[RMDB]
RNA sequence: GGGAACGACUCGAGUAGAGUCGAAAAUCAGAUAUGUCUGAAGUUCAGCAACCACCAGAAACGGCAGUCAAGAUUGGUGAUGAGGCUGGGCAUGGUGGCACACGCCUGUGAUGCCAGCACUUUGGGAGGCUGAGGCAGGAGGAUCACUUGAGGUCAGGGAGGUUACAUAGUUCGCUAUGUAACCUCCAAAAGAAACAACAACAACAAC
Reactivity to 2A3 in 0.01 (KOAc 150mM, MgCl2 10mM, bicine 150mM(pH8.5), 24C), signal-to-noise 1, nucleotides 027 to 156: u050c000a000g010a010u130a030u280g080u030c030u030g000a130a040g050u070u000c020a010g010c020a090a050c010c010a000c010c010a010g070a130a100a030c070g050g100c100a040g040u110c040a020a070g070a190u080u040g050g010u060g020a020u090g040a010g080g000c000u020g070g070g020c060a020u050g060g020u000g010g000c010a040c000a000c070g040c020c040u030g000u000g070a090u060g060c000c020a020g000c060a080c060u140u110u030g030g040g000a000g020g050c050u050g030a000g010g000c070a010g000g050a020g000g000a020u020c000a020c080u020u060g020a000g010g020u070c030a030g140